[RMDB]
RNA sequence: GGGAACGACUCGAGUAGAGUCGAAAAGAAAGAAAGAGAUUGUCAUUGGCAAUGGCAAUAAACCUUGGAUUUCCCUGCCCAGGGGAAAGGGCAUUCGACUUACUGUUGCUGAAGAGAGAGAUAAGAGGCUGGCCACCAAACAGAGCAGUGGCUAAAAAGUAGCCUAAUGAUUCGUCAUUAGGCUACUAAAAGAAACAACAACAACAAC
Reactivity to 2A3 in 0.01 (KOAc 150mM, MgCl2 10mM, bicine 150mM(pH8.5), 24C), signal-to-noise 3, nucleotides 027 to 156: g030a020a030a020g060a010a080a000g060a010g000a010u010u000g000u010c000a020u030u050g070g030c080a040a060u010g000g000c010a000a020u060a090a060a020c010c010u020u040g030g000a050u060u020u040c010c000c010u020g010c000c000c000a020g000g000g000g000a000a030a030g010g010g000c010a020u070u090c070g050a040c040u040u110a020c010u110g040u100u070g010c030u040g050a100a020g020a010g010a000g000a000g010a040u040a120a100g010a040g050g000c030u020g040g040c010c000a020c010c020a090a090a080c030a030g040a000g020c030a020g030u010g020g020c020u020a000a060a000a060
Reactivity to DMS in 0.01 (KOAc 150mM, MgCl2 10mM, bicine 150mM(pH8.5), 24C), signal-to-noise 1, nucleotides 027 to 156: g000a160a090a160g000a090a030a100g000a150g000a060u000u000g020u000c020a080u000u020g080g000c100a200a190u000g020g010c000a020a020u000a060a060a090c000c020u010u010g010g000a170u020u010u010c020c020c000u000g020c090c010c040a260g020g000g000g000a040a070a050g000g000g020c080a110u020u000c030g010a050c040u020u000a090c090u000g000u020u000g010c010u010g000a080a050g000a080g000a200g010a090g000a040u000a130a130g000a090g020g000c020u010g040g000c030c010a050c010c020a070a070a090c130a140g000a130g020c040a060g010u020g020g000c000u000a000a020a050a070